[RMDB]
RNA sequence: GGGAACGACUCGAGUAGAGUCGAAAAGGAACAUCCUUCGGGAUGUUCCAUAGGCGGCGCCUCUCGCUAAGCGGCGCGCAGAGGCGCGCAGCGCUGCUUGAAAGUAAGCCUAGUUCGCUAGGCUUAAUAUUGCAUAAGUAUUCGUACUUAUGCAAUAAAAAGAAACAACAACAACAAC
Reactivity to DMS in 0.01 (KOAc 150mM, MgCl2 10mM, bicine 150mM(pH8.5), 24C), signal-to-noise 9, nucleotides 027 to 126: g010g000a020a010c000a010u000c000c000u000u020c200g020g010g010a010u000g000u000u000c000c000a030u010a020g000g010c010g010g010c010g010c010c040u000c060u000c030g010c050u010a090a140g020c130g010g010c150g010c050g010c090a070g010a090g010g010c010g010c010g020c020a080g000c010g010c020u000g000c050u000u000g010a100a090a140g010u000a010a010g000c000c000u000a000g000u000u010c220g020c010u000a000g000g000c000u000u000a010a090
Reactivity to 2A3 in 0.01 (KOAc 150mM, MgCl2 10mM, bicine 150mM(pH8.5), 24C), signal-to-noise 8, nucleotides 027 to 126: g000g000a000a000c040a000u010c010c020u060u080c200g050g000g000a000u000g000u000u000c000c000a000u000a000g020g000c020g010g000c000g010c000c010u050c010u020c020g020c040u040a140a080g140c060g120g000c020g000c010g000c030a010g040a040g300g010c020g000c010g000c020a010g010c060g000c010u040g000c010u030u080g110a120a080a090g090u090a010a010g000c000c000u000a010g000u030u040c140g010c100u000a000g010g000c000u000u000a010a010